[RMDB]
RNA sequence: GGGAACGACUCGAGUAGAGUCGAAAAGGGAUCUCCUAUCUUAUUUGUCUCGUGUUUUGGAGUGUUCGUGCUCUUUUGGAGUGUGGUGUGUGUGAAGGUGUAAGUUAGGAGAACUUUACACUUUACGCAGUGAUGUCUACUUCGGUAGACAUUAUUGAAAAGAAACAACAACAACAAC
Reactivity to 2A3 in 0.01 (KOAc 150mM, MgCl2 10mM, bicine 150mM(pH8.5), 24C), signal-to-noise 9, nucleotides 027 to 126: g060g010g050a090u020c020u010c010c010u020a050u050c030u050u100a150u110u150u110g130u010c040u020c050g110u080g070u060u070u090u130g080g010a080g010u070g050u080u070c080g030u090g030c010u020c000u050u090u040u120g100g010a070g010u080g020u050g010g050u050g010u000g000u010g010u020g080a040a020g040g010u040g010u040a000a010g010u000u040a050g030g070a050g030a020a000c000u020u020u040a030c030a000c000u030u030u050a040c060g000
Reactivity to DMS in 0.01 (KOAc 150mM, MgCl2 10mM, bicine 150mM(pH8.5), 24C), signal-to-noise 9, nucleotides 027 to 126: g000g000g010a090u000c010u000c010c010u000a120u010c030u000u010a060u020u020u010g010u000c020u000c070g020u010g000u010u010u010u010g000g000a090g010u010g010u010u010c110g010u020g000c040u010c020u000u010u010u020g010g010a070g010u010g020u010g010g020u010g010u010g010u000g010u010g010a040a030g010g010u010g010u000a010a010g000u000u010a080g010g010a080g010a060a050c020u010u010u010a040c040a030c010u000u000u000a060c110g010